Structure probing data (2A3) for a 207-nucleotide construct.
Values cover nucleotides 27 to 156.
RNA sequence: GGGAACGACUCGAGUAGAGUCGAAAAGAUGGGGCAGGUGGGAAUAUACCUCGCCUCCCACUUGCUCCUGAUUGAGAGAUAGACGGCGAGGGUCCGAUCAUACGAUAUAUUCCUGCUCAGCGUAUGAUCGGUUAUGAUACUUAAGAAGAGCAGGGUACAUACCUCGAGUGUUCGCACUCGAGGUAUGAAAAGAAACAACAACAACAAC
Reactivity to 2A3 in 0.01 (KOAc 150mM, MgCl2 10mM, bicine 150mM(pH8.5), 24C), signal-to-noise 2, nucleotides 027 to 156: g040a050u130g000g010g000g020c000a010g020g000u050g000g010g080a120a010u120a000u110a160c000c020u000c000g030c000c000u040c000c000c000a000c000u000u000g010c000u000c000c000u000g020a020u030u120g130a090g000a030g000a010u070a160g160a140c130g020g000c030g000a000g000g010g010u000c000c000g000a000u020c000a000u000a000c000g030a030u070a000u040a030u220u130c000c000u020g000c000u000c000a010g010c000g000u010a000u000g000a000u010c000g000g000u000u000a000u000g010a040u070a140c060u180u180a170a080g120a060a000g000a100g010c020a000g000g000g000u000a000
For 2A3, 840 sequencing reads were counted.